An RNA of 307 nucleotides, treated with 2A3 and read out base by base. The reactions ran in a buffer of 150 mM KOAc, 10 mM MgCl2 and 150 mM bicine (pH 8.5), at 24 C. It was measured as part of the RMDB library POS240. The 2A3 profile rests on 5,031 reads.

[RMDB]
RNA sequence: GGGAACGACUCGAGUAGAGUCGAAAACAUUACGGUGACGUAAUGAACGGAUACGUGAGUAUCCGACUUCCAAUCUUCGGAUUGGAAGAAGUGACAUCGUUCGCGAUGUCACAACCUGUUAUCUUCGGAUAACAGGAACGUUCAUCGGUGACGAUGAACGAACGUCCGCUUCGGCGGACGAACAAUAAAAGUAAAAAAAAAAACUCCGACUACGGUCGGAGAAGGGGUGCAACUCCCCCGUCUAUCCUGGACGUCACCAGGACCAAACUGCAGUAUUCGUACUGCAGAAAAGAAACAACAACAACAAC
Reactivity to 2A3 in 0.01 (KOAc 150mM, MgCl2 10mM, bicine 150mM(pH8.5), 24C), signal-to-noise 3, nucleotides 027 to 266: c000a000u010u010a000c020g010g040u110g120a020c010g000u000a000a000u010g040a090a050c020g000g000a000u000a010c010g040u080g100a080g010u000a000u000c000c000g000a020c000u000u000c000c000a000a000u000c000u020u080c200g130g000a000u010u010g030g000a000a000g010a030a040g000u000g010a000c000a000u000c000g050u050u060c170g030c020g120a000u000g000u000c000a000c000a000a050c000c000u000g000u000u010a000u000c010u030u080c220g130g000a000u000a000a000c000a000g010g010a040a060c020g000u000u000c010a000u000c010g010g010u030g000a010c000g000a000u000g000a010a000c010g000a060a010c010g000u000c010c000g020c050u060u070c190g130g050c000g000g060a010c000g010a040a020c050a050a110u300a130a070a050a040g250u300a170a120a090a030a020a000a020a010a010a030a040c000u010c010c010g020a000c000u020a030c180g090g000u000c000g000g010a000g010a010a010g010g000g010g000u010g000c010a000a000c010u040c000c000c020c000c000g000u000c020u050a040u020c010c000u000g000g000a000c010g010u070c010a000c000c000a000g000g000a000c010c000a050a060a030